Overview:
This 207-nucleotide RNA was probed chemically with 2A3 and DMS.
[RMDB]
RNA sequence: GGGAACGACUCGAGUAGAGUCGAAAAGAAAGAGAGUUAGACACGGUUGAUCUCACCCUUCGGGGGGGCUAUAGAGAUCACUGGAAGCGCUACCGGACAACCGGAACAUUGCAGCAAUGCAGCCCAAAAAAUCCAAACAUCUUCGGAUGUUUGGAAAGUAAGACAUGUAGUUCGCUACAUGUCUUACAAAAGAAACAACAACAACAAC
Reactivity to 2A3 in 0.01 (KOAc 150mM, MgCl2 10mM, bicine 150mM(pH8.5), 24C), signal-to-noise 4, nucleotides 027 to 156: g100a010a110a000g080a000g010a000g030u080u090a040g030a050c040a010c070g010g020u080u180g020a000u000c000u010c000a020c000c010c030u070u170c280g040g010g000g010g000g010g000c050u090a070u080a180g000a000g000a000u010c000a000c010u000g000g060a080a030g020c030g000c070u040a040c000c000g020g010a070c090a170a210c040c000g020g010a030a010c020a030u050u170g010c010a010g000c020a020a050u030g000c010a010g010c000c000c020a060a050a020a030a000a010u000c000c000a000a000a000c000a000u000c000u030u030c090g090g000a000u000g000u000u000u000g000g000a000a010a000
Reactivity to DMS in 0.01 (KOAc 150mM, MgCl2 10mM, bicine 150mM(pH8.5), 24C), signal-to-noise 2, nucleotides 027 to 156: g020a050a070a110g010a100g040a090g010u000u010a070g020a120c060a240c050g040g000u000u010g020a030u010c010u010c000a150c000c000c020u000u000c170g040g020g030g020g030g000g060c090u010a160u000a130g010a080g000a040u000c000a020c030u000g020g010a080a100g000c100g010c070u000a080c010c030g020g010a100c160a110a130c040c000g060g000a120a080c080a100u020u010g000c020a100g050c050a070a130u010g010c050a070g000c040c030c030a010a010a070a060a090a230u000c000c000a000a000a000c000a010u000c020u000u000c300g050g010a030u000g000u000u000u020g010g010a020a000a040
Conditions: 150 mM KOAc, 10 mM MgCl2 and 150 mM bicine (pH 8.5), 24 C.